The record gives the reactivity of an RNA of 177 nucleotides to 2A3 and DMS. 2A3 is a SHAPE reagent: it acylates the 2'-hydroxyl of flexible nucleotides of all four kinds.
[RMDB]
RNA sequence: GGGAACGACUCGAGUAGAGUCGAAAAGGCAGCACUGGAGAGUGUGGCCAUUGUUUUUUCUGGCAGUGGAGCCCCUCUGCUGUGCCAGGCUCUGUGUCCAGCACUUGUUCCGGGCUAUGCCCUAGGGUAUUGAAGAGGCGUUCGCGCCUCUUCAAUAAAAAGAAACAACAACAACAAC
Reactivity to 2A3 in 0.01 (KOAc 150mM, MgCl2 10mM, bicine 150mM(pH8.5), 24C), signal-to-noise 3, nucleotides 027 to 126: g000g010c020a010g010c030a060c230u040g020g030a030g020a030g020u050g010u130g020g020c000c000a000u010u000g110u040u090u040u040u040u070c070u030g040g000c000a040g010u050g020g030a030g070c020c010c000c020u040c010u020g040c010u050g040u070g120c010c000a030g000g010c010u000c000u100g090u020g050u040c010c010a050g060c010a050c010u050u080g070u190u060c000c000g070g010g000c020u060a070u250g020c000c000c020u070a090g020g030g110
Reactivity to DMS in 0.01 (KOAc 150mM, MgCl2 10mM, bicine 150mM(pH8.5), 24C), signal-to-noise 2, nucleotides 027 to 126: g000g010c020a080g010c030a080c020u000g020g020a020g010a020g000u050g010u030g000g030c010c010a030u010u010g000u020u010u020u020u020u070c130u030g000g000c020a040g020u000g000g000a170g010c100c030c030c040u000c000u000g010c020u020g000u050g010c000c040a060g040g010c110u000c040u010g010u050g010u020c030c010a070g000c030a040c060u010u010g040u010u010c010c030g000g000g000c030u010a120u050g000c000c000c010u020a050g020g050g030
The reactions ran in a buffer of 150 mM KOAc, 10 mM MgCl2 and 150 mM bicine (pH 8.5), at 24 C.